Annotation:
The record gives the reactivity of an RNA of 170 nucleotides to 2A3 and DMS. DMS adducts were read by reverse transcription with MarathonRT. The DMS profile rests on 3,393 reads. The data come from the RNA Mapping Database (RMDB), library 15KLIB. The RNA was probed in 150 mM KOAc, 10 mM MgCl2 and 150 mM bicine (pH 8.5) at 24 C.
[RMDB]
RNA sequence: GGGAACGACUCGAGUAGAGUCGAAAAUCCUGACUUCACCGUCUGGAAUCAGGUAGUCACAUAUCCCUCGCUUAACUACGCUGGGGCUUUGUGGGACAUUACAGUUAUAAACAAUGUGGACAAUGAAAACCCCCAUCCUUCGGGAUGGGGAAAAGAAACAACAACAACAAC
Reactivity to 2A3 in 0.01 (KOAc 150mM, MgCl2 10mM, bicine 150mM(pH8.5), 24C), signal-to-noise 3, nucleotides 027 to 129: u010c000c000u000g040a000c030u020u070c040a070c080c050g060u020c090u180g010g050a020a040u100c000a050g030g010u020a040g010u060c000a000c000a010u020a000u070c000c020c010u000c020g000c010u090u050a300a030c040u130a040c210g000c070u040g020g000g000g000c010u000u070u000g000u000g000g030g080a010c000a060u070u100a010c020a000g060u280u030a190u060a090a100a010c120a040a100u060g010u030g080g020a000c010a000a060u110g060a060a050a020a020c000
Reactivity to DMS in 0.01 (KOAc 150mM, MgCl2 10mM, bicine 150mM(pH8.5), 24C), signal-to-noise 3, nucleotides 027 to 129: u020c000c000u000g000a140c130u040u060c130a110c240c100g050u040c120u050g010g120a100a100u000c050a190g070g000u050a070g040u070c040a030c050a150u060a030u050c040c020c080u020c300g070c000u000u110a000a000c160u050a150c160g010c000u040g000g000g050g010c000u020u000u000g000u100g000g050g030a090c000a030u110u040a010c070a060g010u010u060a140u000a130a050a120c180a070a170u000g040u070g060g050a120c060a000a020u000g000a020a030a020a060c270